An RNA of 177 nucleotides, treated with 2A3 and read out base by base.

RNA sequence: GGGAACGACUCGAGUAGAGUCGAAAACAUUCAUAUUAUUAGAACUAAUCCAAGUCAUACGAUGGGAUCUUAUGAACUCAUACAAGCUGUGACAGAGAAUGCUAGACGUAAGUAUCCUCCUGAAAACUCAAUCCGGCUACUUCGGUAGCCGGAUUGAAAAAGAAACAACAACAACAAC
Reactivity to 2A3 in 0.01 (KOAc 150mM, MgCl2 10mM, bicine 150mM(pH8.5), 24C), signal-to-noise 2, nucleotides 027 to 126: c000a010u060u110c040a000u040a080u170u160a100u080u080a060g060a200a070c060u170a190a120u050c000c020a090a090g100u070c040a130u060a060c000g050a040u090g000g000g000a000u000c010u080u300a210u140g000a260a000c000u020c010a000u060a280c000a030a020g100c150u010g050u010g030a010c010a050g070a000g060a200a000u090g060c040u030a000g090a120c000g060u110a000a080g020u020a010u030c000c000u000c000c030u000g010a000a040a000a240c010
Conditions: 150 mM KOAc, 10 mM MgCl2 and 150 mM bicine (pH 8.5), 24 C.